[RMDB]
RNA sequence: GGGAACGACUCGAGUAGAGUCGAAAAGAUAUGGACGUUGUCAGAGCGCUUCCCGUACUCGGAAACGAGUACGAACAGAACUACGCUCUGCAACGUCCUAAGUCAAAGGCGUCGUUCGCGACGCCAAGCCUCUUAUCAAGUUCGCUUGAUAAGAGGCAAAAGAAACAACAACAACAAC
Reactivity to DMS in 0.01 (KOAc 150mM, MgCl2 10mM, bicine 150mM(pH8.5), 24C), signal-to-noise 4, nucleotides 027 to 126: g000a040u020a300u010g000g000a020c010g010u000u000g000u000c020a040g000a010g010c010g010c230u000u000c010c170c010g000u000a000c000u000c000g000g000a090a110a150c010g010a020g000u010a000c000g010a070a080c300a120g000a030a040c090u010a060c020g010c010u000c000u020g000c000a000a000c000g000u000c000c000u000a000a050g010u000c040a050a100a080g010g000c000g020u000c000g000u000u000c180g010c010g010a010c000g000c000c010a000a050
Reactivity to 2A3 in 0.01 (KOAc 150mM, MgCl2 10mM, bicine 150mM(pH8.5), 24C), signal-to-noise 4, nucleotides 027 to 126: g030a010u050a030u140g010g000a010c010g000u000u010g100u300c080a000g000a000g010c070g000c110u040u010c010c020c010g000u000a000c010u000c000g000g030a030a060a040c010g000a000g010u000a000c010g010a050a050c080a040g010a040a010c100u250a070c300g010c010u000c010u000g000c010a000a000c000g000u000c000c000u000a000a000g010u010c010a030a030a090g000g010c000g000u010c000g030u050u150c260g010c020g180a000c000g000c000c000a000a000